[RMDB]
RNA sequence: GGGAACGACUCGAGUAGAGUCGAAAAGAUAUGGAUAAAUGGACAUGCGUCGGCUCGGAAACGAGCCCGCGCAACAGCCAUGUCCUAAGUCAAAAGAGACAGAUGAUGUUCGCAUCAUCUGUCUCAACUAUGAUUCUUAGUUCGCUAAGAAUCAUAGAAAAGAAACAACAACAACAAC
Reactivity to 2A3 in 0.01 (KOAc 150mM, MgCl2 10mM, bicine 150mM(pH8.5), 24C), signal-to-noise 5, nucleotides 027 to 126: g020a020u110a030u130g010g010a020u080a190a300a050u080g010g010a040c080a140u110g000c000g000u010c010g010g020c010u010c010g020g000a060a060a050c000g010a000g010c020c000c000g000c000g000c010a030a060c020a030g040c000c010a000u010g000u000c000c010u030a190a030g080u040c040a000a010a050a200g020a000g000a000c000a000g000a000u010g000a000u010g030u100u190c300g020c140a010u000c000a000u000c000u010g000u000c000u000c000a000a000
Reactivity to DMS in 0.01 (KOAc 150mM, MgCl2 10mM, bicine 150mM(pH8.5), 24C), signal-to-noise 9, nucleotides 027 to 126: g010a040u000a300u000g010g000a020u000a050a100a060u000g010g010a040c060a220u000g010c010g020u000c300g000g000c000u000c000g000g000a080a080a170c000g000a010g010c000c000c080g030c000g010c000a010a030c230a140g000c000c010a010u000g000u000c000c000u000a040a130g000u000c030a080a050a100a110g000a010g000a010c000a000g000a010u000g010a000u010g000u010u010c240g020c000a010u000c000a000u000c000u000g000u000c000u000c000a010a070